RNA sequence: GGGAACGACUCGAGUAGAGUCGAAAACUUAAUUUGGGAGUGAAACAUGAACUACACAGUUGGCGCAUACACAACAACCUAUUGGGCUUAGUAGAGCUGCCAAAAACUGGGUUUCUUGAAAGCCUCACAACUAUAUGGAAUUCGUUCCAUAUAGUUGAAAAGAAACAACAACAACAAC
Reactivity to DMS in 0.01 (KOAc 150mM, MgCl2 10mM, bicine 150mM(pH8.5), 24C), signal-to-noise 9, nucleotides 027 to 126: c030u000u000a060a110u010u010u000g010g010g000a080g010u000g010a130a120a190c060a040u010g000a040a040c100u010a060c070a070c120a050g010u000u000g010g020c100g020c040a070u000a070c100a080c130a050a090c180a050a050c040c030u000a130u010u010g010g010g020c040u000u010a140g000u000a040g010a180g020c020u010g040c000c020a040a040a080a080a180c110u010g000g000g000u000u000u000c010u000u000g010a040a140a210g000c060c030u000c090a190
Reactivity to 2A3 in 0.01 (KOAc 150mM, MgCl2 10mM, bicine 150mM(pH8.5), 24C), signal-to-noise 5, nucleotides 027 to 126: c010u060u110a080a080u180u100u090g060g020g010a170g040u080g060a090a090a010c030a030u050g030a030a020c030u120a040c130a010c020a070g020u020u020g040g000c020g020c030a010u050a090c050a010c020a170a090c010a030a050c040c010u090a260u210u230g070g010g000c020u050u030a020g010u010a010g050a050g050c110u140g040c030c020a080a110a020a000a000c010u010g000g060g000u000u060u080c020u000u030g030a120a040a030g020c000c010u030c010a040